[RMDB]
RNA sequence: GGGAACGACUCGAGUAGAGUCGAAAAAUAACUGCAAUUGUAUUAAAGGGAAGAAUACAGGUGAUUUAUUCGGCUUCCAAUUCCACAAUCCGAAGCAACAUCGAAUCCCGAAAUGUGAAGACCAUUACGACUAUAAAGGGUUCGCCCUUUAUAGUCGAAAAGAAACAACAACAACAAC
Reactivity to 2A3 in 0.01 (KOAc 150mM, MgCl2 10mM, bicine 150mM(pH8.5), 24C), signal-to-noise 6, nucleotides 027 to 126: a000u090a030a060c050u060g010c030a060a170u140u080g050u040a050u030u120a140a100a070g060g020g040a060a040g030a110a050u080a060c030a020g080g040u060g070a090u030u020u110a100u060u130c050g030g000c000u070u000c040c020a030a120u130u050c050c010a070c020a070a040u010c030c020g010a000a010g040c040a030a050c000a040u090c020g060a060a050u020c030c010c000g040a050a020a080u090g020u040g060a080a010g060a010c010c000a010u020u140a030
Reactivity to DMS in 0.01 (KOAc 150mM, MgCl2 10mM, bicine 150mM(pH8.5), 24C), signal-to-noise 4, nucleotides 027 to 126: a050u010a080a090c110u000g000c090a070a110u020u010g010u010a100u000u020a070a080a090g000g000g020a090a080g000a060a040u020a050c060a090g000g020u020g000a050u010u010u000a130u020u010c020g000g010c110u000u000c070c080a070a130u010u030c040c060a040c130a030a060u010c050c060g000a020a050g010c140a060a050c040a020u010c020g000a080a070u000c000c010c000g000a060a050a070u030g030u010g000a080a060g010a130c100c070a060u040u010a140